Chemical mapping of a 177-nucleotide RNA with 2A3 and DMS. For DMS the reverse transcriptase was MarathonRT. For DMS, 57,420 sequencing reads were counted. Conditions: 150 mM KOAc, 10 mM MgCl2 and 150 mM bicine (pH 8.5), 24 C. The 2A3 profile rests on 65,162 reads. It was measured as part of the RMDB library OK1LIB. 2A3 adducts were read by reverse transcription with SuperScript II with manganese.
RNA sequence: GGGAACGACUCGAGUAGAGUCGAAAACGUCGUGAACUAGCGACAAUGCACUAGGUCCAUCGUUAUCUAACCGAAACAUCGUGACUAGUCGUAGAAUAGAACCAGGAGAGGACGCUGGCAAACAAAGACGGUUUGUCUGAUUCGUCGGACGGGCCGUAAAAGAAACAACAACAACAAC
Reactivity to 2A3 in 0.01 (KOAc 150mM, MgCl2 10mM, bicine 150mM(pH8.5), 24C), signal-to-noise 9, nucleotides 027 to 126: c060g000u010c010g020u040g090a140a070c060u030a090g010c000g020a010c000a030a060u130g030c030a010c020u030a030g110g110u010c030c020a050u050c100g030u030u050a190u130c050u060a040a090c050c030g020a030a030a010c030a030u070c070g060u080g040a030c010u010a020g010u010c050g020u030a030g050a120a060u090a060g040a040a020c010c010a010g030g030a090g020a030g050g040a010c020g000c040u000g020g000c010a020a050a010c030a020a110a010g130
Reactivity to DMS in 0.01 (KOAc 150mM, MgCl2 10mM, bicine 150mM(pH8.5), 24C), signal-to-noise 9, nucleotides 027 to 126: c110g000u000c040g020u010g010a120a100c110u020a090g010c030g010a050c070a120a080u010g010c070a050c030u010a050g010g010u010c020c020a090u020c110g010u010u010a080u010c050u010a100a110c200c090g000a060a060a060c090a060u020c140g000u020g000a070c020u000a030g000u010c060g010u010a040g010a050a080u030a070g000a110a120c020c030a060g000g000a110g000a100g000g000a050c060g020c030u010g000g010c090a050a070a060c110a050a060a090g020